[RMDB]
Conditions: 150 mM KOAc, 10 mM MgCl2 and 150 mM bicine (pH 8.5), 24 C.
The record gives the reactivity of an RNA of 177 nucleotides to DMS and 2A3.
For DMS the reverse transcriptase was MarathonRT.

RNA sequence: GGGAACGACUCGAGUAGAGUCGAAAAGCGGUGGUGACCCUGGAAGGCCCGAUCGUCAACGGUCGUGGUGGGCCCCAGUUUCUGCCGCUCGGUCCGUCGAGCGCCGGCGGUGACACCAUCGCGGCAGAGACGGAUUAAAGUUCGCUUUAAUCCGUCUAAAAGAAACAACAACAACAAC
Reactivity to DMS in 0.01 (KOAc 150mM, MgCl2 10mM, bicine 150mM(pH8.5), 24C), signal-to-noise 9, nucleotides 027 to 126: g020c010g030g030u000g000g010u000g000a160c200c240c010u000g010g010a140a090g030g000c000c000c010g010a030u000c010g020u010c290a150a150c080g010g010u000c020g020u010g030g030u000g010g000g010c040c030c010c010a040g000u010u010u000c070u010g010c010c000g000c010u010c020g010g000u000c220c040g000u010c150g010a180g010c300g020c030c010g000g000c010g000g000u000g000a150c030a030c020c000a010u000c020g010c000g000g010c220a090g000
Reactivity to 2A3 in 0.01 (KOAc 150mM, MgCl2 10mM, bicine 150mM(pH8.5), 24C), signal-to-noise 7, nucleotides 027 to 126: g010c000g010g000u020g010g000u020g020a100c030c000c010u020g020g030a200a070g080g010c000c010c010g010a020u020c010g150u090c080a240a240c140g100g000u030c030g040u140g080g100u220g020g020g000c000c000c000c000a000g000u000u090u010c060u100g020c000c000g000c020u040c020g000g010u020c020c040g090u130c140g090a130g060c100g010c030c010g010g000c000g000g020u020g020a010c000a000c010c010a000u010c010g000c000g000g000c060a050g030